[RMDB]
RNA sequence: GGGAACGACUCGAGUAGAGUCGAAAAUAUCACCAUCGGUACAGCAGGCACCCGCGGGCUGCGGACGUAUGUACAGCUCUUUGUGCUGAUCGCGGCAGCAAACGACGUCCGCUGUGAUGUGGCGUCACAGUGACUGGCGAUUCGUCGCCAGUCACUGAAAAGAAACAACAACAACAAC
Reactivity to DMS in 0.01 (KOAc 150mM, MgCl2 10mM, bicine 150mM(pH8.5), 24C), signal-to-noise 1, nucleotides 027 to 126: u020a100u000c030a050c020c030a080u000c090g010g010u000a040c040a040g020c010a060g000g020c060a080c090c000c020g010c080g000g000g020c040u000g010c020g060g000a040c050g020u000a070u000g040u000a090c070a020g000c090u000c160u000u000u000g030u000g030c020u000g000a120u000c070g010c000g000g000c000a040g000c030a040a100a110c080g010a030c060g020u000c010c010g000c030u000g000u000g040a050u040g020u020g010g000c030g000u000c050a160
Reactivity to 2A3 in 0.01 (KOAc 150mM, MgCl2 10mM, bicine 150mM(pH8.5), 24C), signal-to-noise 1, nucleotides 027 to 126: u090a030u040c080a070c070c000a020u050c030g020g060u030a120c010a060g000c020a050g070g080c040a040c040c000c010g040c010g050g070g000c050u040g000c020g040g040a040c050g090u110a070u250g050u010a030c030a050g020c020u060c000u190u120u130g090u070g040c000u000g070a020u020c020g000c010g100g000c000a000g000c000a090a010a020c080g030a020c030g020u090c020c010g010c000u020g000u020g040a160u080g020u030g040g040c020g000u040c060a040